Conditions: 150 mM KOAc, 10 mM MgCl2 and 150 mM bicine (pH 8.5), 24 C. Chemical mapping of a 177-nucleotide RNA with DMS.
RNA sequence: GGGAACGACUCGAGUAGAGUCGAAAAGAUAUGGAACCAAGACACCCACCUGAACAACAGCUAUGACGUCGGAAACGACGUAUAGACAUGUUCUGCGUAGGAUAGUGGGUGUCUUGGUUCCUAAGUCCGAUUGUGCAUUGUUCGCAAUGCACAAUCGAAAAGAAACAACAACAACAAC
Reactivity to DMS in 0.01 (KOAc 150mM, MgCl2 10mM, bicine 150mM(pH8.5), 24C), signal-to-noise 1, nucleotides 027 to 126: g000a030u000a230u030g000g010a000a030c000c000a010a000g010a030c000a020c000c010c010a010c040c030u000g010a080a020c070a010a100c230a140g000c010u000a020u010g090a010c000g070u000c000g020g010a040a040a170c000g000a000c010g010u000a000u000a000g020a070c080a180u000g000u010u000c040u000g010c150g000u030a180g020g000a160u050a060g000u000g010g000g030u000g010u000c020u000u000g000g000u000u000c000c000u000a000a100g000u020c000
For DMS, 1,166 sequencing reads were counted. The data come from the RNA Mapping Database (RMDB), library TTRINS.